Structure probing data (2A3 and DMS) for a 177-nucleotide construct. The DMS profile rests on 6,569 reads. It was measured as part of the RMDB library OK2TRN. For 2A3 the reverse transcriptase was SuperScript II with manganese.

RNA sequence: GGGAACGACUCGAGUAGAGUCGAAAAAGCUGCAUAUCCUCGCGCGCGCUCUCUGGUUCGAUCUGGUCAACGGCAUGGGCGGCCGGCCUAACUGUUUCGUCGUCGGGAUCACGACCGCCGGCGACGAGUAACUAGCUACGUUCGCGUAGCUAGUUACAAAAGAAACAACAACAACAAC
Reactivity to 2A3 in 0.01 (KOAc 150mM, MgCl2 10mM, bicine 150mM(pH8.5), 24C), signal-to-noise 2, nucleotides 027 to 126: a000g030c030u050g050c020a050u040a060u200c010c010u020c020g000c000g000c000g000c000g000c000u020c010u000c020u100g070g000u050u060c010g020a100u020c020u050g040g020u040c040a080a030c040g020g000c050a070u070g030g040g030c000g020g020c020c000g020g000c010c000u070a100a100c050u080g090u130u160u040c020g010u000c000g010u000c000g020g000g020a050u130c060a040c140g100a090c030c060g100c000c000g020g000c000g000a000c000g000a000
Reactivity to DMS in 0.01 (KOAc 150mM, MgCl2 10mM, bicine 150mM(pH8.5), 24C), signal-to-noise 4, nucleotides 027 to 126: a090g010c030u000g010c050a090u000a120u010c030c010u010c090g030c090g000c070g000c060g000c040u000c030u010c050u010g000g000u000u000c050g010a060u010c050u000g020g000u000c050a070a100c090g010g010c030a050u000g010g010g010c060g000g010c030c030g010g010c020c030u000a050a100c150u010g010u010u010u000c000g010u000c010g020u000c010g030g000g000a100u000c140a110c160g000a090c080c070g020c000c010g010g000c000g010a000c000g000a070